RNA sequence: GGGAACGACUCGAGUAGAGUCGAAAACAGCAGUGUACGUAGUGGUACAUGGAUGGUAAAAACGUCAAGGAUAGGGUUGAUCCGCAGGGAAGCGCGAGGGCCAACCUGCCUUUGGGCAACAGUUGGCAAAGGCGAACCUUCAGAGACUCUAAUGGAGGUAACAUACAAUGUUCGCAUUGUAUGUUACAAAAGAAACAACAACAACAAC
Reactivity to DMS in 0.01 (KOAc 150mM, MgCl2 10mM, bicine 150mM(pH8.5), 24C), signal-to-noise 3, nucleotides 027 to 156: c020a100g030c020a130g020u000g030u000a060c050g000u000a170g010u000g000g000u000a030c020a050u000g010g020a080u020g020g000u000a050a070a050a060a060c090g000u000c060a080a100g010g010a090u000a070g000g020g010u010u000g030a120u000c010c040g010c070a080g020g000g000a100a090g010c040g020c030g030a160g040g010g010c020c020a020a050c010c040u010g010c000c020u000u000u000g050g050g030c000a050a070c080a050g020u000u000g010g010c020a040a040a080g010g000c030g020a080a070c020c010u000u000c020a050g000a140g000a090c030u010c020u010a050a110u010g010g000a070g010
Reactivity to 2A3 in 0.01 (KOAc 150mM, MgCl2 10mM, bicine 150mM(pH8.5), 24C), signal-to-noise 6, nucleotides 027 to 156: c020a000g080c020a010g020u010g020u060a020c020g040u090a030g080u080g160g000u040a020c020a030u080g050g030a060u040g030g050u180a040a030a010a040a040c040g060u060c090a050a050g070g020a080u060a040g030g020g000u010u030g050a070u030c020c000g000c030a010g010g020g050a100a050g050c100g000c030g100a080g020g140g000c000c000a000a000c000c010u000g000c000c010u110u110u150g130g010g000c020a050a050c050a090g010u020u010g000g000c040a070a020a020g080g000c010g010a040a040c000c000u020u010c010a010g010a000g010a030c010u000c000u060a100a090u140g070g020a050g050